This 207-nucleotide RNA was probed chemically with 2A3 and DMS.
[RMDB]
RNA sequence: GGGAACGACUCGAGUAGAGUCGAAAACGUCCCCGUCGUACAGAAUGAUAACAUAUCUCUCCAAAUAUCUGAGCUUGGGUAUACGGGGAAACCCAACCCCUUGGGAAGAUUGGGUAUAUGGCUAAAUUACAUCGAUUGUACUUCGGUACAAUCGAAAUCUUUGUAAGGUGUUCGCACCUUACAAAGAAAAAGAAACAACAACAACAAC
Reactivity to 2A3 in 0.01 (KOAc 150mM, MgCl2 10mM, bicine 150mM(pH8.5), 24C), signal-to-noise 2, nucleotides 027 to 156: c030g080u020c030c000c000c010g130u090c010g040u090a070c080a130g150a180a120u080g100a110u100a190a030c020a030u070a010u020c100u020c040u030c120c030a120a150a150u210a150u060c020u020g010a010g110c000u010u020g030g000g000u000a020u020a050c000g010g000g010g000a020a030a020c000c000c000a010a010c000c010c000c000u000u010g000g040g000a020a000g010a070u030u060g000g000g010u020a020u000a010u040g020g000c060u090a070a060a110u230u120a070c060a180u030c010g000a000u000u000g010u000a000c000u010u060c180g040g000u000a000c000a000a000u010c000g000a010a010a010
Reactivity to DMS in 0.01 (KOAc 150mM, MgCl2 10mM, bicine 150mM(pH8.5), 24C), signal-to-noise 1, nucleotides 027 to 156: c050g000u000c010c000c020c120g000u000c030g030u000a220c010a050g010a150a140u000g020a190u000a090a080c050a090u000a080u010c060u000c010u000c020c020a080a170a080u020a080u000c050u000g000a300g010c080u000u010g000g030g020u000a230u000a150c130g000g000g010g000a070a070a150c030c060c020a070a160c120c000c000c080u000u010g000g030g000a190a010g000a060u010u000g030g010g000u000a010u000a100u020g020g000c050u000a120a120a190u000u000a120c090a130u000c010g000a030u000u010g000u000a000c020u000u010c230g040g000u000a000c000a000a000u000c050g010a010a020a110
The data come from the RNA Mapping Database (RMDB), library M2RFPK. For DMS, 1,408 sequencing reads were counted.